The data come from the RNA Mapping Database (RMDB), libraries RFM100 and RFMREP. The record gives the reactivity of an RNA of 177 nucleotides to 2A3 and DMS.

[RMDB]
RNA sequence: GGGAACGACUCGAGUAGAGUCGAAAAGUCCGGGGUAGGAGUGAAAUCCUGUAAUCCUGGACGGACCACCAAUGGGGAAACCACGUUGAGAGACCGGACCCGACAGUGAGGGACGAAAGCCAGGGUCAAAUAGACAAGUAUUCGUACUUGUCUAUUUAAAAGAAACAACAACAACAAC
Reactivity to 2A3 in 0.01 (KOAc 150mM, MgCl2 10mM, bicine 150mM(pH8.5), 24C), signal-to-noise 8, nucleotides 027 to 126: g000u000c000c000g000g000g020g010u070a010g000g020a030g000u060g090a050a040a050u010c000c000u010g110u160a060a050u030c000c000u000g000g000a000c000g000g010a010c000c000a020c010c030a030a100u100g010g000g010g040a030a050a060c010c020a070c070g020u060u100g080a100g000a010g020a060c010c020g040g020a070c000c010c000g030a040c030a040g060u080g140a100g020g020g020a030c050g100a100a010a010g050c030c040a030g040g000g020u040c010
Reactivity to DMS in 0.01 (KOAc 150mM, MgCl2 10mM, bicine 150mM(pH8.5), 24C), signal-to-noise 9, nucleotides 027 to 126: g010u000c000c000g010g010g010g030u010a020g010g000a020g000u010g020a170a150a150u000c000c000u010g020u030a150a050u020c000c000u000g010g000a020c000g010g000a170c050c030a130c100c090a040a070u020g010g010g010g000a100a100a120c060c030a070c120g000u000u000g000a110g000a100g010a070c060c050g000g000a080c030c010c010g000a090c130a070g010u010g010a110g000g000g000a080c070g000a060a080a100g010c030c030a080g000g010g000u010c070
The RNA was probed in 150 mM KOAc, 10 mM MgCl2 and 150 mM bicine (pH 8.5) at 24 C. Reactivities are given for positions 27 through 126.